About this RNA
Source: RMDB library OK2TST, as collected in RNAgym. Chemical mapping of a 177-nucleotide RNA with 2A3 and DMS. The reactions ran in a buffer of 150 mM KOAc, 10 mM MgCl2 and 150 mM bicine (pH 8.5), at 24 C. DMS adducts were read by reverse transcription with MarathonRT.
[RMDB]
RNA sequence: GGGAACGACUCGAGUAGAGUCGAAAACACCGCCGGGGGAGACGACACGUGAGCGAGAUCUCGGAAGUGAACUCCUGCUCGAGCACCGUCACCUCGUACUCCUCGAGCAAGGGCCCCAAUCGUGAGAUACUAAGGUCAACUUCGGUUGACCUUAGUAAAAAGAAACAACAACAACAAC
Reactivity to 2A3 in 0.01 (KOAc 150mM, MgCl2 10mM, bicine 150mM(pH8.5), 24C), signal-to-noise 2, nucleotides 027 to 126: c040a020c020c010g040c030c000g040g030g000g000g000a090g050a060c000g010a000c010a030c150g100u130g090a120g100c010g020a060g020a190u070c040u030c050g000g020a110a010g020u030g090a070a090c030u040c030c000u030g020c000u000c000g000a040g020c070a020c040c030g020u000c010a050c060c130u050c010g000u040a060c000u030c010c000u010c000g020a020g000c030a060a110g010g020g010c000c000c000c000a010a120u190c080g080u090g150a060g000a080
Reactivity to DMS in 0.01 (KOAc 150mM, MgCl2 10mM, bicine 150mM(pH8.5), 24C), signal-to-noise 3, nucleotides 027 to 126: c070a140c020c160g010c050c030g010g000g010g000g000a110g020a030c020g010a060c090a080c180g030u010g030a100g010c000g020a060g000a240u000c040u000c060g010g010a070a040g000u010g000a130a090c120u010c040c030u000g000c000u000c000g000a020g000c090a110c090c070g000u010c050a100c110c080u000c050g020u020a040c030u000c070c000u000c000g000a030g010c040a020a050g020g010g020c020c010c000c060a090a090u010c090g000u000g010a160g010a200